Chemical mapping of a 207-nucleotide RNA with 2A3 and DMS. The 2A3 profile rests on 6,401 reads. The reactions ran in a buffer of 150 mM KOAc, 10 mM MgCl2 and 150 mM bicine (pH 8.5), at 24 C. 2A3 adducts were read by reverse transcription with SuperScript II with manganese.

[RMDB]
RNA sequence: GGGAACGACUCGAGUAGAGUCGAAAAAGCAAGUCAGGCUUGUCGCUGUGAGAGACUAAACACAUCUUUUAGAUGGAAACAAAGAUUACGCUUUAGCUGCUUAGUUCAGCUACACCUUGGAUAACUUAUUCUAUACGGGUUUUUCAAAGGUGUUGACGCAUAUUAAAGUGUUCGCACUUUAAUAUGCAAAAGAAACAACAACAACAAC
Reactivity to 2A3 in 0.01 (KOAc 150mM, MgCl2 10mM, bicine 150mM(pH8.5), 24C), signal-to-noise 7, nucleotides 027 to 156: a000g040c040a040a010g050u090c050a040g010g070c020u050u060g040u070c040g000c060u040g020u080g070a040g010a010g000a070c030u090a040a130a000c060a010c010a060u010c040u030u210u060u060a070g010a070u050g040g070a060a090a020c060a030a120a010g050a040u110u150a060c080g010c050u080u060u040a020g010c000u010g010c020u110u110a020g010u140u100c000a000g010c000u010a010c000a000c000c000u000u010g000g010a000u010a030a010c000u040u040a080u300u160c120u110a100u040a220c110g010g010g030u000u000u010u000u020c040a090a050a030g000g000u010g000u000u060g020a010c040
Reactivity to DMS in 0.01 (KOAc 150mM, MgCl2 10mM, bicine 150mM(pH8.5), 24C), signal-to-noise 3, nucleotides 027 to 156: a060g010c040a060a070g010u010c070a100g010g010c020u000u010g020u000c050g020c040u010g020u000g000a100g000a110g010a090c040u010a050a060a080c040a120c030a130u000c020u000u000u000u000a090g000a090u010g000g000a150a080a140c070a100a080a100g010a110u000u000a090c090g000c050u000u000u000a090g030c010u000g000c000u000u000a090g000u000u000c010a060g010c030u000a060c000a010c000c000u000u000g010g010a020u000a010a030c010u000u000a110u000u010c160u010a190u000a060c130g000g000g000u010u000u010u000u000c000a040a020a030g000g010u000g010u000u000g010a110c090